[RMDB]
The data come from the RNA Mapping Database (RMDB), library OK2TST. The record gives the reactivity of an RNA of 177 nucleotides to 2A3 and DMS. The RNA was probed in 150 mM KOAc, 10 mM MgCl2 and 150 mM bicine (pH 8.5) at 24 C. Reactivities are given for positions 27 through 126. As a SHAPE reagent, 2A3 marks flexible, mostly unpaired nucleotides at the ribose 2'-OH. The DMS profile rests on 1,762 reads.

RNA sequence: GGGAACGACUCGAGUAGAGUCGAAAAUCGAGUGUGUGUCUGAGCUGGAGGUGCAGUGAGGAGAUCUAUUAUUGCCAUUGGUUUAAUAAAGAACAAACAACACCUCUCGCCUUACAGCCGGUCGGUCCUCCUUACUGCACUUCGGUGCAGUAAGGAGAAAAGAAACAACAACAACAAC
Reactivity to 2A3 in 0.01 (KOAc 150mM, MgCl2 10mM, bicine 150mM(pH8.5), 24C), signal-to-noise 2, nucleotides 027 to 126: u030c000g010a150g050u090g000u000g010u000g020u060c030u040g010a050g030c010u010g010g030a010g000g000u040g000c070a020g030u020g090a000g070g050a080g020a020u000c040u020a270u110u050a050u050u090g010c040c050a200u120u290g000g040u100u080u120a030a030u050a000a090a000g020a030a060c040a050a130a030c030a040a030c010a020c050c000u000c000u010c020g040c000c000u050u050a090c000a050g070c010c020g000g020u010c000g020g050u040c000
Reactivity to DMS in 0.01 (KOAc 150mM, MgCl2 10mM, bicine 150mM(pH8.5), 24C), signal-to-noise 2, nucleotides 027 to 126: u000c020g020a050g010u000g000u010g030u000g010u000c000u000g010a160g000c020u020g030g020a030g010g050u010g000c130a070g020u010g010a130g020g000a120g000a090u000c060u000a050u020u000a050u020u000g030c010c010a220u000u010g010g020u010u000u020a040a030u000a000a030a040g020a070a140c090a060a100a090c150a100a060c150a060c020c020u000c020u000c250g000c030c020u010u020a070c090a080g000c020c030g010g000u000c030g000g000u000c100